[RMDB]
RNA sequence: GGGAACGACUCGAGUAGAGUCGAAAAGAUAUGGAUCCCUUUCAACGGGGAGAUAUUGUGGUCGGAAACGACCAUGUAUCGAAGAACUAUCAAGGGAUCCUAAGUCAAAGCGAUCUUCGGAUCGCAAGCGAUAACAUGAGUUCGCUCAUGUUAUCGCAAAAGAAACAACAACAACAAC
Reactivity to DMS in 0.01 (KOAc 150mM, MgCl2 10mM, bicine 150mM(pH8.5), 24C), signal-to-noise 3, nucleotides 027 to 126: g000a010u000a190u010g000g000a020u000c000c000c000u000u000u000c280a130a150c300g000g000g000g000a060g020a010u000a000u000u010g060u000g000g030u000c000g010g020a030a060a080c000g010a000c000c000a000u000g010u000a000u010c010g000a140a130g010a120a130c020u000a060u020c210a050a000g000g000g010a010u000c000c000u000a000a060g010u000c040a070a080a110g010c000g000a000u010c000u000u000c210g020g000a000u010c000g040c000a040a030
Reactivity to 2A3 in 0.01 (KOAc 150mM, MgCl2 10mM, bicine 150mM(pH8.5), 24C), signal-to-noise 2, nucleotides 027 to 126: g000a000u030a010u060g000g000a000u010c000c020c000u020u080u060c210a150a060c160g010g020g060g000a050g000a000u030a000u030u300g030u000g000g000u030c010g020g060a000a020a020c010g010a010c000c000a000u000g000u000a010u010c030g120a150a030g020a040a020c050u080a090u300c100a070a030g000g000g000a000u010c000c000u020a030a010g000u000c030a040a040a100g000c000g010a010u000c000u070u100c300g160g030a020u000c000g050c000a020a000